[RMDB]
RNA sequence: GGGAACGACUCGAGUAGAGUCGAAAAUAUAUCAUUCCUUGUGCGUAGGAAAAUCAAUGAAGGGACGCGCUUAAAACAUGCAUUUUAAGCAGCGCUUUUCUCGCUUUGUAACCCAAAUUGCGCAUGAAAAAAGUAAGGCGAAAAUCCACACACGCAAGACUCGACGAUAUUUCGAUAUCGUCGAGUCAAAAGAAACAACAACAACAAC
Reactivity to 2A3 in 0.01 (KOAc 150mM, MgCl2 10mM, bicine 150mM(pH8.5), 24C), signal-to-noise 1, nucleotides 027 to 156: u300a010u020a040u090c010a050u020u000c000c000u000u090g040u000g010c040g000u040a110g000g090a000a010a160a000u090c080a050a080u150g060a110a180g080g000g020a050c000g000c000g000c000u000u050a070a000a010a040c050a180u270g110c070a080u040u000u000u110a010a030g040c170a050g030c030g030c020u110u030u030u070c020u000c020g040c000u020u050u090g040u030a090a110c010c010c000a050a110a180u240u070g010c040g000c040a040u130g080a010a150a030a000a000a000g170u160a020a020g000g000c010g010a020a020a020a020u000c040c000a010c000a000c000a000c020g110c030a070a100